Structure probing data (2A3 and DMS) for a 177-nucleotide construct. For 2A3, 2,022 sequencing reads were counted. High 2A3 reactivity points to a flexible backbone, as in loops and unpaired stretches. The reactions ran in a buffer of 150 mM KOAc, 10 mM MgCl2 and 150 mM bicine (pH 8.5), at 24 C.
RNA sequence: GGGAACGACUCGAGUAGAGUCGAAAAGCCUAGAAAUCCACUGGGACACUCGCGAGGCGGGAGAACUCGAGCCGCUGUCUGCCUGUGUCGGCGGCGCAGACUGGAGUGUCGUGUCUCUCUGGAGGCCAGCGCAGCUUUUAUUCGUAAAAGCUGCGCUAAAAGAAACAACAACAACAAC
Reactivity to 2A3 in 0.01 (KOAc 150mM, MgCl2 10mM, bicine 150mM(pH8.5), 24C), signal-to-noise 3, nucleotides 027 to 126: g040c000c010u020a080g160a040a090a030u040c010c010a020c070u030g010g010g000a000c010a010c030u100c030g060c000g060a090g010g100c010g020g030g000a150g100a130a050c030u030c070g050a060g090c000c000g000c000u000g020u010c020u020g040c040c030u100g040u120g180u290c090g020g000c000g010g020c110g010c010a000g010a030c000u100g120g060a100g060u040g010u010c040g010u000g010u000c000u000c000u000c010u030g020g050a020g010g030c020c090
Reactivity to DMS in 0.01 (KOAc 150mM, MgCl2 10mM, bicine 150mM(pH8.5), 24C), signal-to-noise 1, nucleotides 027 to 126: g000c010c000u010a050g000a130a170a100u000c000c020a030c080u000g000g000g030a110c020a050c000u000c040g000c010g030a130g000g000c030g000g070g000a050g020a080a050c110u010c080g000a210g010c010c000g030c030u000g000u020c000u010g010c030c030u000g000u050g040u020c090g000g000c000g000g020c100g000c050a070g000a080c050u000g000g000a110g030u000g020u020c110g000u000g030u000c000u000c000u010c200u020g000g000a040g030g010c100c080